RNA sequence: GGGAACGACUCGAGUAGAGUCGAAAACGCAGGAAAAGCGCAUGCUUAUCGGGACAACAACCCAACGCGGCAGGUGUACCGUUGGGCAAAACGUUUACUGGCGCGUUUCGAUUGAGGUAGUUUCGACGCACAUGAAAUCAUUCGUGAUUUCAUGUGCAAAAGAAACAACAACAACAAC
Reactivity to DMS in 0.01 (KOAc 150mM, MgCl2 10mM, bicine 150mM(pH8.5), 24C), signal-to-noise 1, nucleotides 027 to 126: c040g080c060a120g010g000a080a020a080a080g000c070g030c080a090u020g040c030u000u000a040u010c000g020g000g000a010c130a060a080c070a180a240c000c010c060a070a040c160g020c150g000g100c070a120g010g000u000g000u000a040c030c020g000u000u000g050g000g080c100a040a040a070a210c040g000u000u030u000a160c010u000g000g000c000g010c060g010u000u000u000c150g000a100u000u010g030a020g010g040u000a100g000u000u010u000c010g000a170c270
Reactivity to 2A3 in 0.01 (KOAc 150mM, MgCl2 10mM, bicine 150mM(pH8.5), 24C), signal-to-noise 4, nucleotides 027 to 126: c010g020c030a030g060g030a060a110a010a020g050c010g000c060a010u100g010c020u040u040a020u110c000g010g020g040a020c040a040a030c020a030a110c040c010c020a020a100c130g040c120g070g020c040a100g100g080u090g020u070a040c030c000g000u030u020g010g000g000c020a020a040a000a050c030g000u010u060u070a040c020u050g200g000c020g000c010g040u010u030u100c070g040a100u000u220g020a030g010g070u140a030g020u050u000u000c000g010a010c080